Source information
The record gives the reactivity of an RNA of 177 nucleotides to DMS. The reactions ran in a buffer of 150 mM KOAc, 10 mM MgCl2 and 150 mM bicine (pH 8.5), at 24 C. Reactivities are given for positions 27 through 126. The data come from the RNA Mapping Database (RMDB), library TTRDEL.
RNA sequence: GGGAACGACUCGAGUAGAGUCGAAAAGAUAUGGAAGCUCCUUUGAUCGUACGUAACAUCUAUCGGAAACGAUAGUGGUACGGGAGGAGCAUUCCUAAGUCAAAAGGACACCCUUCGGGGUGUCCAAGGAGUGAAUUACGUUCGCGUAAUUCACUCCAAAAGAAACAACAACAACAAC
Reactivity to DMS in 0.01 (KOAc 150mM, MgCl2 10mM, bicine 150mM(pH8.5), 24C), signal-to-noise 1, nucleotides 027 to 126: g000a000u010a300u010g000g000a020a020g010c010u010c000c000u000u020u000g010a110u040c050g020u000a030c000g000u000a050a030c120a020u020c000u000a000u000c030g000g030a150a080a160c010g020a020u000a020g020u000g000g010u000a000c030g000g000g000a010g000g010a040g000c010a010u010u000c000c000u010a040a130g000u000c070a060a040a170a170g010g000a010c000a010c000c000c010u000u000c220g050g000g000g010u000g000u020c000c000a000a030